[RMDB]
RNA sequence: GGGAACGACUCGAGUAGAGUCGAAAAGAAAGAAAGAAAGAAAGGUAUGAAGUCCUAUUCACCCUUGAUAGGAUAAACUUCAUAUUGAUCGUGUAUGUGCUAACGCACAUACACGAAUGCGCAUGCAGAACUGCAUGCAUGAACAUAGAGGGUGCAAACCUAAAUCGAGGUUCGCCUCGAUUUAGGUAAAAGAAACAACAACAACAAC
Reactivity to 2A3 in 0.01 (KOAc 150mM, MgCl2 10mM, bicine 150mM(pH8.5), 24C), signal-to-noise 4, nucleotides 027 to 156: g050a010a070a020g080a070a050a010g060a050a040a020g070a030a100a010g030g000u010a010u010g000a000a000g010u000c000c000u000a000u000u010c050a100c010c000c000u000u000g000a000u000a000g040g000a010u090a050a110a010c000u000u000c000a000u010a010u060u070g040a060u020c000g000u000g010u000a000u000g020u000g020c050u120a090a060c140g000c000a000c000a000u000a000c010a000c000g000a020a010u040g030c010g000c000a000u000g000c000a010g080a300a080c200u050g000c000a020u000g010c010a020u110g070a040a010c080a060u160a070g000a000g000g020g000u030g050c060a110a060
Reactivity to DMS in 0.01 (KOAc 150mM, MgCl2 10mM, bicine 150mM(pH8.5), 24C), signal-to-noise 1, nucleotides 027 to 156: g010a130a050a100g030a190a110a180g000a110a120a110g000a060a100a190g030g000u000a000u000g000a000a030g020u000c020c000u000a040u000u000c070a110c000c080c060u000u000g010a000u010a040g010g030a110u010a050a140a050c010u000u000c000a020u000a040u000u000g030a180u010c000g050u000g020u000a000u010g000u000g000c000u000a060a280c300g010c010a000c000a000u000a010c010a000c000g000a000a000u000g050c040g040c000a000u000g000c000a000g010a110a090c080u020g020c080a080u000g000c000a010u000g000a080a110c090a060u010a050g020a300g020g020g000u010g030c040a110a060